[RMDB]
An RNA of 177 nucleotides, treated with 2A3 and DMS and read out base by base. It was measured as part of the RMDB library TTRDEL. DMS adducts were read by reverse transcription with MarathonRT. The RNA was probed in 150 mM KOAc, 10 mM MgCl2 and 150 mM bicine (pH 8.5) at 24 C. For 2A3 the reverse transcriptase was SuperScript II with manganese.
RNA sequence: GGGAACGACUCGAGUAGAGUCGAAAAGAUAUGGAAUGCCAGGGAGCUGCUCGGAAACGAGGCAGCGACGAUCUGGACAUUCCUAAGUCAAAACUGAAGUAGAGUACUUCGGUACUCUACUUCAGAACCAAGAAAGGGAGUUCGCUCCCUUUCUUGGAAAAGAAACAACAACAACAAC
Reactivity to 2A3 in 0.01 (KOAc 150mM, MgCl2 10mM, bicine 150mM(pH8.5), 24C), signal-to-noise 1, nucleotides 027 to 126: g010a020u060a030u120g000g000a000a000u010g050c000c000a000g040g000g000a020g020c010u000g020c020u010c020g010g040a060a090a020c040g000a100g280g150c000a000g020c010g030a030c010g000a000u000c010u010g020g020a000c000a000u000u020c000c000u000a080a010g050u010c020a010a020a160a180c000u010g000a010a000g010u000a000g010a010g020u000a000c010u040u090c160g000g000u000a000c000u010c000u010a000c000u010u000c000a000g000a000a000
Reactivity to DMS in 0.01 (KOAc 150mM, MgCl2 10mM, bicine 150mM(pH8.5), 24C), signal-to-noise 3, nucleotides 027 to 126: g000a020u000a300u020g000g000a020a000u000g010c000c000a010g000g000g000a020g010c000u000g030c010u000c010g010g010a090a100a180c020g010a050g020g020c010a000g010c000g000a040c160g010a010u010c010u010g010g000a130c010a000u010u010c000c000u000a020a100g010u000c040a090a070a090a170c000u000g030a010a000g000u000a010g000a020g010u000a010c000u000u000c250g010g010u000a000c000u000c000u010a010c000u000u010c020a000g000a060a130